[RMDB]
RNA sequence: GGGAACGACUCGAGUAGAGUCGAAAAGCGUACUACCAACGAUAAGCAACAACAGCGAGUCGAACUACACAAUCCCAAAUAGGAUUGUGCGACUCGACAUGUUGCGAAACGUUGGUAUCGCAAAACCAUGUGAUGGGGUUCGCCCCAUCACAUGGAAGCGUCAGACCGUCUUCGGACGGUCUGACGCAAAAGAAACAACAACAACAAC
Reactivity to 2A3 in 0.01 (KOAc 150mM, MgCl2 10mM, bicine 150mM(pH8.5), 24C), signal-to-noise 1, nucleotides 027 to 156: g000c000g020u120a080c090u020a000c040c000a000a000c030g050a030u030a090a040g010c020a000a070c010a000a050c000a070g000c000g020a000g000u000c020g140a120a110c220u180a080c000a000c000a190a000u020c030c040c000a120a300a200u300a100g000g000a000u000u000g010u010g000c020g010a000c000u000c000g140a000c070a000u040g020u000u000g120c030g000a060a020a000c000g000u010u010g000g000u000a040u040c000g010c000a010a010a010a010c000c000a000u000g000u000g000a000u020g000g010g000g000u130u010c170g180c000c000c000c000a000u000c000a000c000a000u020g000g000a060a020